[RMDB]
RNA sequence: GGGAACGACUCGAGUAGAGUCGAAAACACAGUAUCAGCAAACCGAACAGGACUGUGAGGAACAUUUCCUGGCAAUAAAUAUGAAUCGCCUUCAUUGAUGAUGAUAUCAAUGAACUUUGGUUCAGCGUAGCCCGUUCGAUUUCGAUCGAACGGGCUAAAAAGAAACAACAACAACAAC
Reactivity to 2A3 in 0.01 (KOAc 150mM, MgCl2 10mM, bicine 150mM(pH8.5), 24C), signal-to-noise 1, nucleotides 027 to 126: c030a010c000a000g090u040a040u140c020a040g130c080a080a020a040c020c050g040a000a060c040a080g000g110a000c000u020g000u000g050a000g070g170a060a010c010a210u000u130u050c000c000u010g020g000c020a070a130u210a190a120a070u300a140u120g050a020a010u000c050g000c010c000u030u010c010a000u020u000g020a020u000g010a000u090g100a030u030a010u300c000a000a020u000g000a020a040c000u100u110u230g000g030u040u030c000a000g060c160g020
Reactivity to DMS in 0.01 (KOAc 150mM, MgCl2 10mM, bicine 150mM(pH8.5), 24C), signal-to-noise 1, nucleotides 027 to 126: c050a030c030a090g000u010a040u010c100a140g000c110a090a060a130c100c040g050a110a060c090a160g000g000a040c300u000g000u020g000a070g000g000a080a080c130a080u010u010u000c010c010u000g060g020c060a060a040u000a050a160a040u010a070u000g040a000a010u000c080g010c140c300u000u000c000a010u000u010g000a010u020g010a140u000g010a130u020a000u000c000a010a000u000g000a000a000c000u000u000u000g020g040u020u000c010a050g020c230g000
Conditions: 150 mM KOAc, 10 mM MgCl2 and 150 mM bicine (pH 8.5), 24 C. The record gives the reactivity of an RNA of 177 nucleotides to 2A3 and DMS. The DMS profile rests on 676 reads. For 2A3 the reverse transcriptase was SuperScript II with manganese.